[RMDB]
RNA sequence: GGGAACGACUCGAGUAGAGUCGAAAAGGUCUUACGUCAGCCAAGAGAACAACGGUAACUCUCUUGGUUGUCACAGAGAUGUGACGACGCUGACCAUCUAAGUUACCGCUUGUUAGAUGGUAAGACACACGGGGUUUUAGUUCGCUAAAACCCCGUGAAAAGAAACAACAACAACAAC
Reactivity to DMS in 0.01 (KOAc 150mM, MgCl2 10mM, bicine 150mM(pH8.5), 24C), signal-to-noise 1, nucleotides 027 to 126: g020g000u020c010u000u030a010c000g000u000c020a280g030c010c050a060a060g000a190g010a040a000c040a050a110c080g000g030u000a010a020c020u010c080u000c020u000u000g020g010u020u000g010u000c020a000c050a030g050a230g010a170u010g000u000g000a030c010g000a060c120g070c260u000g010a070c030c010a020u000c050u000a040a040g010u000u000a020c000c000g040c170u000u000g000u000u000a020g010a060u010g000g000u000a020a010g000a080c010a240